[RMDB]
RNA sequence: GGGAACGACUCGAGUAGAGUCGAAAACAUCUAAGGGCUUGAUAGUCUAUGAUGAAUGACACCAAGAGUUGGCUGAUGGCAACAUGAAAGGACACGUGCAAGACCUGAAAAGGUCACUUGUAGGGCAGCCUAAGCACUAGUUCGCUAGUGCUUAGGCAAAAGAAACAACAACAACAAC
Reactivity to DMS in 0.01 (KOAc 150mM, MgCl2 10mM, bicine 150mM(pH8.5), 24C), signal-to-noise 1, nucleotides 027 to 126: c030a030u000c020u000a090a120g040g000g040c010u050u000g040a180u000a030g020u000c010u000a300u000g000a000u010g020a160a050u010g000a110c120a100c030c000a140a090g000a140g010u000u000g010g000c080u010g000a110u000g000g030c100a050a070c100a070u000g010a060a050a110g010g000a040c120a050c090g040u000g000c050a110a040g010a050c000c020u000g000a040a020a030a010g000g000u000c000a040c110u000u000g010u000a080g010g000g050c220a080